[RMDB]
RNA sequence: GGGAACGACUCGAGUAGAGUCGAAAAGACACGACGGAGACGUCGUGUCAAAGAGUGGGAAACCACUCAAAGAGCCACAGCUUCGGCUGUGGCUCAAGGCGCGGCCCCGUCCGCGGAACAAACCAAAGAUUAAUUAAUCGUUCGCGAUUAAUUAAUCAAAAGAAACAACAACAACAAC
Reactivity to DMS in 0.01 (KOAc 150mM, MgCl2 10mM, bicine 150mM(pH8.5), 24C), signal-to-noise 1, nucleotides 027 to 126: g010a030c000a020c010g000a010c010g000g010a290g010a290c000g010u000c000g020u010g000u000c000a000a080a120g000a010g020u000g020g000g000a240a170a230c000c000a000c000u000c000a000a060a080g030a020g040c010c000a000c020a050g000c000u010u030c250g020g080c020u020g030u010g040g050c000u000c000a030a050g000g030c030g020c000g000g000c030c010c030c070g000u010c000c020g010c000g030g020a090a070c160a040a100a160c150c120a080a100a120
Reactivity to 2A3 in 0.01 (KOAc 150mM, MgCl2 10mM, bicine 150mM(pH8.5), 24C), signal-to-noise 1, nucleotides 027 to 126: g000a000c010a010c000g000a000c010g020g020a070g030a040c010g010u000c010g000u020g000u000c010a000a000a000g000a000g000u010g000g030g000a000a060a110c000c000a000c000u010c000a050a040a000g000a000g000c000c020a000c000a000g060c020u200u220c300g150g000c000u040g000u010g000g040c010u030c010a010a010g010g000c010g000c040g020g000c020c050c100c000g130u090c010c000g010c000g010g040a070a030c090a100a080a040c070c030a110a090a050
This 177-nucleotide RNA was probed chemically with DMS and 2A3. DMS adducts were read by reverse transcription with MarathonRT. For DMS, 774 sequencing reads were counted. Conditions: 150 mM KOAc, 10 mM MgCl2 and 150 mM bicine (pH 8.5), 24 C. The data come from the RNA Mapping Database (RMDB), library OK2TRN. High DMS reactivity at an A or C suggests that its Watson-Crick edge is free.